[RMDB]
RNA sequence: GGGAACGACUCGAGUAGAGUCGAAAACAAAGGUAAACGGCUCAGUGUGCGGGGUAUUACACUCGGUUUAAUGUCUGAAUGCGAUAAUCCGCACGAUGAUCUCUUUAUCUUUGUUUGUUUAGGUCCCUUGACUGAUUAUGUUCGCAUAAUCAGUCAAAAAAGAAACAACAACAACAAC
Reactivity to DMS in 0.01 (KOAc 150mM, MgCl2 10mM, bicine 150mM(pH8.5), 24C), signal-to-noise 8, nucleotides 027 to 126: c000a010a010a000g000g010u000a000a010a000c250g000g000c090u000c000a020g000u030g010u000g000c000g010g000g000g000u010a000u000u000a140c010a000c050u000c000g010g000u000u010u030a220a210u050g010u030c000u000g010a020a020u000g010c040g000a000u000a010a030u010c000c000g010c000a000c000g000a030u000g000a000u000c000u000c260u000u000u000a000u000c000u000u000u000g000u000u000u000g000u010u010u030a090g000g010u000c000c000c010
Reactivity to 2A3 in 0.01 (KOAc 150mM, MgCl2 10mM, bicine 150mM(pH8.5), 24C), signal-to-noise 7, nucleotides 027 to 126: c000a000a000a000g020g000u000a000a010a010c050g010g000c000u000c010a020g020u010g000u000g210c000g000g000g010g010u030a000u010u020a010c000a000c010u000c010g020g090u030u090u160a120a090u260g140u110c010u030g010a020a010u030g020c030g020a000u010a010a020u010c000c000g000c000a000c000g010a030u010g000a000u010c040u010c000u020u000u000a000u000c000u000u000u010g000u010u000u000g000u000u090u110a080g020g030u030c000c000c000